[RMDB]
RNA sequence: GGGAACGACUCGAGUAGAGUCGAAAAGUAAAGGCGGAGGAGGGUUUUGGCUUGCGCUCGGUCCGCCCGCGCGUGGUGUGGCCUGGAAUUCGUGUGUGGAGGAUGAUUAAUGCCGCGCGCCCAGGAAGAAAAAUCUAUUGUUCGCAAUAGAUUUUUCAAAAGAAACAACAACAACAAC
Reactivity to 2A3 in 0.01 (KOAc 150mM, MgCl2 10mM, bicine 150mM(pH8.5), 24C), signal-to-noise 2, nucleotides 027 to 126: g060u040a000a160a040g000g020c020g000g060a010g040g040a030g030g080g000u020u040u130u120g090g020c060u060u110g000c100g020c030u010c010g090g150u000c000c010g020c010c030c000g010c000g000c030g000u010g000g020u060g040u070g040g000c030c000u000g030g150a090a080u100u060c050g030u160g050u070g030u120g230g080a060g040g000a020u050g000a010u060u240a150a030u070g010c000c010g030c000g000c010g000c010c020c010a040g090g030a060a190
Reactivity to DMS in 0.01 (KOAc 150mM, MgCl2 10mM, bicine 150mM(pH8.5), 24C), signal-to-noise 3, nucleotides 027 to 126: g000u000a080a070a150g000g020c040g020g010a050g000g020a090g010g010g010u000u010u000u000g020g010c090u000u010g000c050g000c010u000c010g000g020u000c000c030g000c010c000c050g000c050g010c010g020u000g000g020u010g020u010g010g010c050c020u010g010g010a180a070u000u000c050g010u010g020u000g020u010g010g000a150g000g000a100u000g000a110u000u010a070a040u000g010c010c000g000c030g010c030g010c010c040c050a090g000g000a090a140